[RMDB]
RNA sequence: GGGAACGACUCGAGUAGAGUCGAAAAAAGUUACAGAGGUGCUUCUCACUGACGAUGGUAAUUACAUAUAUUGUUGGCUGAAGACACUAGCUGCCCAUGUUAAGAGAGAUGUCAAAAAAGAGUUGAACAAAGACAGCUACUUCGGUAGCUGUCUUUGAAAAGAAACAACAACAACAAC
Reactivity to DMS in 0.01 (KOAc 150mM, MgCl2 10mM, bicine 150mM(pH8.5), 24C), signal-to-noise 1, nucleotides 027 to 126: a070a090g000u000u020a060c130a090g030a110g010g010u000g020c060u000u010c050u010c140a080c030u010g000a030c030g000a080u010g000g030u000a050a090u000u020a080c190a110u000a110u010a080u000u000g000u030u000g020g010c190u010g000a060a050g000a110c020a030c010u010a060g020c030u000g020c030c020c000a050u040g020u010u000a060a070g000a090g000a050g010a070u020g010u000c020a000a060a010a060a040a110g000a080g000u010u010g020a040a220